Annotation: Chemical mapping of a 207-nucleotide RNA with 2A3. For 2A3 the reverse transcriptase was SuperScript II with manganese. The RNA was probed in 150 mM KOAc, 10 mM MgCl2 and 150 mM bicine (pH 8.5) at 24 C. For 2A3, 668 sequencing reads were counted. It was measured as part of the RMDB library OK3TST.
RNA sequence: GGGAACGACUCGAGUAGAGUCGAAAACUCGCUCAAACAUACAGAGGUGUUGUGCGAAAUGAAUCUCUCUGCAUUAGAAUGGUCGAAGAAUCAGCGGCCAUUCGAGACCUAAUUAGAAGCCGCAUUAACAGCUUUGGAACACGCCUUGCUGACGUGACCUCAGGCAUUUAUUCGUAAAUGCCUGAGGAAAAGAAACAACAACAACAAC
Reactivity to 2A3 in 0.01 (KOAc 150mM, MgCl2 10mM, bicine 150mM(pH8.5), 24C), signal-to-noise 2, nucleotides 027 to 156: c020u000c000g000c020u040c090a060a140a170c010a050u250a100c080a040g050a040g010g060u020g010u100u000g030u040g010c010g020a020a000a120u130g010a060a120u000c030u020c010u000c020u150g130c020a090u060u160a060g000a050a000u050g010g000u000c030g010a070a010g040a180a240u080c080a010g080c000g010g000c000c000a000u000u010c000g000a000g000a030c010c010u070a050a020u110u140a030g030a110a020g040c030c010g170c000a010u040u080a000a070c010a030g050c010u020u000u040g040g000a070a040c060a000c020g020c000c020u120u140g000c020u080g080a020c040g020u040g050a060